RNA sequence: GGGAACGACUCGAGUAGAGUCGAAAAGAGCGGUAUAGAAUACCGGUCUUGUGAACAUCAGAGGAUGUCAUGCGGCAGGGUUGCCAGUAACUCCCACGUACACGGGGCGAAGAGGAACAAGCGUGUAAGUCUCUCCAAGUUUCGACUUGGAGAGACUAAAAGAAACAACAACAACAAC
Reactivity to DMS in 0.01 (KOAc 150mM, MgCl2 10mM, bicine 150mM(pH8.5), 24C), signal-to-noise 2, nucleotides 027 to 126: g000a030g000c010g000g010u010a000u010a080g000a060a300u010a000c000c010g000g000u000c000u010u000g030u040g000a160a060c020a030u020c070a110g020a150g010g010a010u000g000u000c020a080u000g010c070g000g030c050a070g000g000g060u050u010g050c000c050a080g000u030a080a110c110u010c010c020c000a120c170g010u060a050c050a080c040g000g000g000g000c020g000a050a100g010a040g000g000a010a040c110a090a030g030c020g020u020g000u010a160
Reactivity to 2A3 in 0.01 (KOAc 150mM, MgCl2 10mM, bicine 150mM(pH8.5), 24C), signal-to-noise 2, nucleotides 027 to 126: g070a010g040c020g000g020u040a090u060a130g300a300a040u000a030c000c010g000g120u000c000u020u080g000u010g050a090a010c000a070u070c090a120g020a000g300g060a020u030g020u050c000a020u100g020c000g050g000c000a020g000g000g120u070u050g030c020c020a000g000u030a030a080c000u000c000c000c030a050c040g050u100a040c030a000c030g010g030g050g000c060g010a010a000g000a040g120g040a040a000c020a010a090g040c020g040u070g010u070a040
Chemical mapping of a 177-nucleotide RNA with DMS and 2A3. The reactions ran in a buffer of 150 mM KOAc, 10 mM MgCl2 and 150 mM bicine (pH 8.5), at 24 C. The data come from the RNA Mapping Database (RMDB), library RFM100. The DMS profile rests on 2,807 reads. DMS adducts were read by reverse transcription with MarathonRT.